[RMDB]
RNA sequence: GGGAACGACUCGAGUAGAGUCGAAAAGGGUUUUGAGAUCUUUAAGCAGAUGGCAGGUUCACCCCGUACGGUGCGGAAGUUCGCGCUUCCGUGAAACGCGAAAAUCGGACGGUGGCUGCAAGUCGCAUUGAAGGGAUCGCCUUCGGGCGAUCCCUAAUAAAUAGUACCUAUUCGUAGGUACUAUUUAAAAAGAAACAACAACAACAAC
Reactivity to DMS in 0.01 (KOAc 150mM, MgCl2 10mM, bicine 150mM(pH8.5), 24C), signal-to-noise 1, nucleotides 027 to 156: g020g000g010u010u000u000u010g010a150g000a060u000c030u000u000u000a090a110g020c020a090g050a050u010g000g030c030a000g000g010u010u000c050a090c020c020c010c030g020u000a040c050g010g010u000g000c030g000g040a080a070g020u000u000c300g020c300g010c020u000u000c020c060g030u000g010a040a050a040c070g000c070g000a050a010a080a090u000c040g010g010a060c010g010g030u010g040g020c020u010g010c030a070a090g010u000c010g010c030a190u000u000g010a140a060g000g040g030a060u000c040g000c060c020u000u040c300g040g010g070c090g000a000u010c000c000c000u000a000a030
Reactivity to 2A3 in 0.01 (KOAc 150mM, MgCl2 10mM, bicine 150mM(pH8.5), 24C), signal-to-noise 1, nucleotides 027 to 156: g080g020g000u060u100u180u240g050a040g000a070u080c000u050u050u060a100a000g000c080a040g000a120u070g030g000c000a000g050g040u160u070c010a020c000c010c000c010g000u020a020c050g030g050u040g000c000g000g010a000a000g020u000u170c060g020c010g010c120u000u020c000c010g020u030g030a160a120a000c100g020c010g130a070a000a000a100u030c020g010g000a020c110g070g030u030g020g050c010u040g020c010a010a040g010u010c000g050c030a070u020u180g090a010a040g000g000g000a000u070c060g060c070c000u030u130c220g090g000g000c000g000a000u010c020c000c000u000a010a010